[RMDB]
RNA sequence: GGGAACGACUCGAGUAGAGUCGAAAAGCACGUAGGUUCAGAUGAUGGGCCCGCAUCCGUACGAAAGUACGACGAAAGUCUAGCCUACGUGCAUGAGCACGCGGGCCCCGUGCUCUACUGCAAAAGACCUCCUCCUGACCUUCGGGUCAGGAGGAGGAAAAGAAACAACAACAACAAC
Reactivity to 2A3 in 0.01 (KOAc 150mM, MgCl2 10mM, bicine 150mM(pH8.5), 24C), signal-to-noise 1, nucleotides 027 to 126: g030c000a000c000g000u000a000g000g050u040u050c190a010g010a070u020g030a000u060g040g000g000c000c000c020g000c010a020u020c000c010g010u000a010c000g010a080a040a040g000u000a000c030g020a040c020g120a170a010a070g020u030c020u000a000g010c000c010u000a000c000g000u000g000c000a000u010g000a020g000c000a000c000g020c020g000g000g000c000c010c020c000g000u010g040c000u010c000u020a080c020u050g120c020a100a120a040a000g200a080

Chemical mapping of a 177-nucleotide RNA with 2A3. The RNA was probed in 150 mM KOAc, 10 mM MgCl2 and 150 mM bicine (pH 8.5) at 24 C.